[RMDB]
Structure probing data (DMS and 2A3) for a 177-nucleotide construct. Conditions: 150 mM KOAc, 10 mM MgCl2 and 150 mM bicine (pH 8.5), 24 C. The 2A3 profile rests on 1,455 reads. The DMS profile rests on 1,654 reads.
RNA sequence: GGGAACGACUCGAGUAGAGUCGAAAAUUGUAAUGACAAUGUAAUCGCAAUGGAGAACUCACCAAACCGUUCAUUUGCCAAAUACGCUACCUAACCAUUAGUAGUUGAAGGAGAUGGAACUGCUAGGUCACCCGUUAGCUUUCGAGCUAACGGGUGAAAAAGAAACAACAACAACAAC
Reactivity to DMS in 0.01 (KOAc 150mM, MgCl2 10mM, bicine 150mM(pH8.5), 24C), signal-to-noise 2, nucleotides 027 to 126: u000u000g020u000a080a110u040g000a130c090a080a050u050g030u020a060a150u030c030g050c010a070a150u000g010g000a220g040a110a050c130u000c020a120c010c040a030a090a010c100c030g010u000u000c030a040u000u000u040g060c000c030a070a000a110u100a080c030g000c010u000a020c000c010u000a080a120c270c170a060u000u030a010g000u000a040g010u020u000g000a100a000g000g060a080g000a120u000g000g000a010a060c060u000g000c060u030a040g000g000
Reactivity to 2A3 in 0.01 (KOAc 150mM, MgCl2 10mM, bicine 150mM(pH8.5), 24C), signal-to-noise 3, nucleotides 027 to 126: u040u080g000u020a090a220u110g070a050c070a090a060u100g020u190a120a060u130c060g000c040a000a060u030g060g000a040g020a090a070c010u030c070a080c030c070a050a080a000c020c020g060u030u000c060a070u060u000u190g130c030c010a020a000a090u150a050c060g000c010u050a080c000c020u090a070a060c000c010a010u020u020a010g100u000a000g000u000u040g060a140a040g150g030a090g030a030u070g100g050a010a010c020u010g000c000u010a010g000g060

DMS adducts were read by reverse transcription with MarathonRT.